[RMDB]
This 177-nucleotide RNA was probed chemically with DMS and 2A3. Values cover nucleotides 27 to 126. Conditions: 150 mM KOAc, 10 mM MgCl2 and 150 mM bicine (pH 8.5), 24 C. Reactivities are rounded to 0.1 and cut off at 0 and 3.
RNA sequence: GGGAACGACUCGAGUAGAGUCGAAAAGAUAUGGAAGUGUUGAUGACCUGUGGUGGUAUCGGAAACGAUACGUAACAUCCACAGCAAGACAUUCCUAAGUCAAAACCCCUAUGUUCGCAUAGGGGAAGACUCUACCGUAGUUCGCUACGGUAGAGUCAAAAGAAACAACAACAACAAC
Reactivity to DMS in 0.01 (KOAc 150mM, MgCl2 10mM, bicine 150mM(pH8.5), 24C), signal-to-noise 2, nucleotides 027 to 126: g020a040u000a300u000g000g020a030a050g050u000g010u010u000g010a210u030g000a090c300c000u000g010u000g000g030u000g010g030u000a000u000c000g010g040a120a100a190c000g000a010u000a000c040g020u000a010a000c110a020u010c000c000a000c000a000g000c040a040a150g000a000c000a050u000u000c010c000u000a090a190g020u010c040a060a050a100a110c000c010c000c000u000a000u000g000u000u010c260g020c000a000u000a010g000g000g000g020a020a010
Reactivity to 2A3 in 0.01 (KOAc 150mM, MgCl2 10mM, bicine 150mM(pH8.5), 24C), signal-to-noise 2, nucleotides 027 to 126: g010a020u080a010u160g000g050a080a070g300u060g030u160u050g090a300u120g060a070c020c000u000g000u010g020g000u000g000g000u020a000u030c000g000g000a040a050a020c010g010a010u000a010c000g010u020a010a000c020a180u100c000c000a000c010a000g010c020a050a140g000a000c000a000u000u000c000c010u050a250a050g060u050c020a010a010a100a300c010c020c000c020u000a000u010g050u010u060c300g000c130a010u010a000g040g000g000g000a000a020
The DMS profile rests on 1,454 reads.